[RMDB]
RNA sequence: GGGAACGACUCGAGUAGAGUCGAAAACUCAAGUACCUCCACAUGUACCAGUAAUUAUAGAUGAAGCUUAUUUUGAAUUUGUGACAGCAGAGGACUACCCGGAUACACUUGCUUUGCAACAAAAAUACUAUCGUGCCUUUUUCGAAAGGCACGAUAGAAAAGAAACAACAACAACAAC
Reactivity to 2A3 in 0.01 (KOAc 150mM, MgCl2 10mM, bicine 150mM(pH8.5), 24C), signal-to-noise 3, nucleotides 027 to 126: c030u010c020a000a020g040u020a110c030c010u020c020c030a040c010a050u120g040u090a050c020c020a020g050u190a080a230u130u090a100u140a130g180a110u050g050a110a040g000c000u080u090a110u140u130u050u140g220a210a090u070u060u040g100u090g040a000c080a010g050c000a000g030a010g050g020a020c030u040a070c030c000c000g040g000a030u070a060c030a010c040u040u060g000c000u150u120u130g000c010a050a000c040a020a160a060a000a020u180a100